[RMDB]
RNA sequence: GGGAACGACUCGAGUAGAGUCGAAAACGUAAUACAGUGAGUGGACGGAAUAAAUCCCCUUCCCACCUCCCCACUGUCCACUCACUGUCUUCCUAAGAGGAAAUAUAAAUCGGGGGUGGGAAGGGGAAUUAUCGGGAUCCUUCGGGAUCCCGAUAAUAAAAGAAACAACAACAACAAC
Reactivity to 2A3 in 0.01 (KOAc 150mM, MgCl2 10mM, bicine 150mM(pH8.5), 24C), signal-to-noise 2, nucleotides 027 to 126: c010g060u110a090a010u130a240c000a010g000u000g000a020g000u000g010g000a000c030g040g030a030a100u190a130a080a040u120c000c000c000c040u000u000c000c000c000a000c000c000u020c040c130c000c110a110c060u070g000u000c000c000a000c000u000c010a000c000u000g000u000c000u000u000c000c000u050a080a040g080a070g170g110a050a180a010u260a040u080a030a100a020u180c050g000g000g000g000g000u000g010g000g000a000a000g000g000g000g000a000
Conditions: 150 mM KOAc, 10 mM MgCl2 and 150 mM bicine (pH 8.5), 24 C. This 177-nucleotide RNA was probed chemically with 2A3. For 2A3, 1,133 sequencing reads were counted.